Structure probing data (DMS) for a 177-nucleotide construct. Conditions: 150 mM KOAc, 10 mM MgCl2 and 150 mM bicine (pH 8.5), 24 C. The DMS profile rests on 1,296 reads. It was measured as part of the RMDB library OK2TRN. For DMS the reverse transcriptase was MarathonRT.

RNA sequence: GGGAACGACUCGAGUAGAGUCGAAAAUAUUGUCCAUGAGUUUCCGGAUAUGUAUCGUCGUUCUUGGCUUGAUGAGAUGGCUGAUGCAGUUGGUAUUAGUCCAGAUGAUGAUCACACUGCCGGUGUGAACGCUUGAGUCGUUCGCGACUCAAGCGUUAAAAGAAACAACAACAACAAC
Reactivity to DMS in 0.01 (KOAc 150mM, MgCl2 10mM, bicine 150mM(pH8.5), 24C), signal-to-noise 1, nucleotides 027 to 126: u020a090u000u010g020u010c040c040a150u010g000a180g000u000u010u000c020c020g020g000a150u010a060u000g000u010a040u000c020g020u000c040g000u000u000c020u000u000g030g020c050u000u030g060a090u020g000a180g000a160u000g000g020c010u000g010a100u000g010c030a080g030u010u000g020g020u000a050u000u010a050g020u000c010c050a060g010a070u010g010a080u010g000a070u000c040a040c050a020c140u000g000c090c100g000g040u000g010u000g000